RNA sequence: GGGAACGACUCGAGUAGAGUCGAAAAGACGGAAAAGAUCGAACCUAAGAAGAUCAGGGAGUGUUAGCCGAAUCCUAGGGCUCCUAGGGACGCAUCGUCGGAUGCGAAAUAAACACUAACGUCGAAAAUAGCCGUAGUAGUUCGCUACUACGGCUAUAAAAGAAACAACAACAACAAC
Reactivity to DMS in 0.01 (KOAc 150mM, MgCl2 10mM, bicine 150mM(pH8.5), 24C), signal-to-noise 4, nucleotides 027 to 126: g000a030c000g010g000a090a070a120a090g040a020u000c010g000a060a160c150c100u050a060a130g020a190a130g000a010u000c020a080g000g020g000a060g030u010g010u000u000a100g020c170c110g000a120a100u020c020c000u000a030g010g010g020c160u040c020c010u000a030g000g020g030a250c010g000c000a020u000c000g010u070c300g000g000a010u010g000c000g000a060a050a060u020a130a010a010c020a020c010u000a080a150c040g000u000c020g000a120a030a070
Reactivity to 2A3 in 0.01 (KOAc 150mM, MgCl2 10mM, bicine 150mM(pH8.5), 24C), signal-to-noise 3, nucleotides 027 to 126: g020a020c020g040g020a050a090a110a010g010a040u050c020g000a090a070c030c050u140a110a080g020a080a040g000a070u020c000a030g060g010g100a070g010u030g050u070u030a040g110c110c050g080a080a040u070c000c000u000a020g030g060g160c050u080c010c000u000a030g020g000g020a010c010g020c010a010u000c030g210u080c140g140g010a000u000g000c000g000a010a010a020u060a000a030a000c000a000c050u060a110a000c020g010u050c020g030a020a020a020
Structure probing data (DMS and 2A3) for a 177-nucleotide construct. For 2A3 the reverse transcriptase was SuperScript II with manganese. The RNA was probed in 150 mM KOAc, 10 mM MgCl2 and 150 mM bicine (pH 8.5) at 24 C.